Chemical mapping of a 207-nucleotide RNA with DMS.

[RMDB]
RNA sequence: GGGAACGACUCGAGUAGAGUCGAAAAUCACUCCGGUGUUCGAGAAGCUCAGAGACAUCUUCCCGACGCUGAAGUCGUCGCUUCCGACCGUAACUCAGGGCCUCGCGGACAUCGCAAACGCCAUCGUGAACACGGUAACUGCCCCGGAGAACCUCGCAUAAGGGAGGGAAUUCGUUCCCUCCCUUAUAAAAGAAACAACAACAACAAC
Reactivity to DMS in 0.01 (KOAc 150mM, MgCl2 10mM, bicine 150mM(pH8.5), 24C), signal-to-noise 1, nucleotides 027 to 156: u020c070a160c000u000c050c060g020g010u000g020u000u000c030g000a020g010a050a060g050c090u000c070a080g050a270g000a120c130a150u000c040u000u010c000c010c010g000a030c020g050c050u020g020a050a070g040u000c040g070u000c000g020c040u000u010c000c030g000a060c000c040g040u000a060a130c020u000c000a120g060g020g040c020c040u000c070g040c060g010g020a040c050a100u000c030g050c060a000a070a070c070g010c010c000a110u020c070g000u000g020a160a170c070a090c030g070g030u000a110a090c040u000g000c000c050c020c050g020g010a130g010a180a070c170c000u000c040g050c300
About this RNA:
The reactions ran in a buffer of 150 mM KOAc, 10 mM MgCl2 and 150 mM bicine (pH 8.5), at 24 C. Values are in units of 0.01, from 0 to 300, in steps of 10. DMS adducts were read by reverse transcription with MarathonRT. Source: RMDB library OK3TST, as collected in RNAgym.